[RMDB]
This 177-nucleotide RNA was probed chemically with 2A3 and DMS. It was measured as part of the RMDB library TTRDES. For 2A3, 8,571 sequencing reads were counted.
RNA sequence: GGGAACGACUCGAGUAGAGUCGAAAAGAUAUGGAUGUGUCGACGUGGAGCUCAGUGUCGGAAACGACACAUGAGCGAUGAAACGUCGAGCACAUCCUAAGUCAAAACCUCUCGUUCGCGAGAGGAAGUAGACUAACACGUUCGCGUGUUAGUCUACAAAAGAAACAACAACAACAAC
Reactivity to 2A3 in 0.01 (KOAc 150mM, MgCl2 10mM, bicine 150mM(pH8.5), 24C), signal-to-noise 2, nucleotides 027 to 126: g040a010u080a000u170g000g000a000u000g030u010g050u050c000g010a010c020g030u040g110g070a030g000c000u000c010a010g000u000g000u000c020g020g000a060a060a010c010g000a000c020a010c040a300u030g000a000g000c010g030a100u010g010a020a110a000c000g000u010c000g010a010g020c000a000c000a000u000c000c000u000a030a000g010u000c030a010a020a060a220c010c020u000c000u000c000g070u070u060c300g000c030g200a010g000a010g000g000a010a000
Reactivity to DMS in 0.01 (KOAc 150mM, MgCl2 10mM, bicine 150mM(pH8.5), 24C), signal-to-noise 2, nucleotides 027 to 126: g000a040u010a300u020g000g010a020u010g010u000g020u000c000g000a020c000g000u000g010g000a070g020c000u000c000a030g020u000g020u010c010g010g020a100a080a180c010g020a010c000a000c000a060u000g000a000g020c000g030a060u010g000a100a160a000c000g000u000c000g000a110g020c010a000c010a020u000c000c000u000a000a050g000u000c020a110a070a090a130c030c000u000c000u000c000g010u000u020c220g020c010g000a010g000a010g000g010a000a060